[RMDB]
RNA sequence: GGGAACGACUCGAGUAGAGUCGAAAAAAUUGGGUUAAAACGGUGGGGGACGAUCCCGUAACAUCCGUCCUAACGGCGACAGACUGCACGGCCCUGCCUCUUUGGUGUGUUCAAUGAACAGUCGUUCUGGCCCCUAAGGCGUUCGCGCCUUAGGGAAUACCAGGUGAGUAUUCGUACUCACCUGGUAAAAAGAAACAACAACAACAAC
Reactivity to DMS in 0.01 (KOAc 150mM, MgCl2 10mM, bicine 150mM(pH8.5), 24C), signal-to-noise 1, nucleotides 027 to 156: a010a020u010u000g030g000g000u000u000a010a060a020a130c040g010g010u000g000g010g060g030g020a110c110g000a110u000c030c010c000g040u010a060a110c030a080u000c040c020g000u010c020c000u010a100a130c090g030g020c050g000a110c020a140g000a060c060u000g020c090a100c120g040g000c060c020c010u010g010c000c030u010c040u010u000u010g000g030u000g010u000g000u000u000c080a110a170u010g010a010a080c060a040g020u000c010g010u000u000c020u010g030g010c060c010c010c000u000a020a030g000g000c020g000u000u000c250g030c030g040c020c040u000u010a010g000g010g040a000a000
Reactivity to 2A3 in 0.01 (KOAc 150mM, MgCl2 10mM, bicine 150mM(pH8.5), 24C), signal-to-noise 1, nucleotides 027 to 156: a000a010u170u130g000g000g020u070u030a110a020a010a000c070g000g000u060g050g020g000g010g040a000c030g030a060u010c000c000c000g010u000a040a010c040a150u070c030c020g010u050c050c020u070a140a010c060g020g000c010g030a040c000a090g080a070c050u020g000c060a020c070g070g050c000c000c020u020g000c000c010u110c130u080u160u030g070g000u060g000u010g000u060u040c040a110a090u110g040a040a010c000a030g000u010c000g040u030u020c000u060g050g040c040c000c000c000u010a000a000g010g010c000g000u030u040c170g010c000g010c050c000u000u030a000g000g000g010a000a010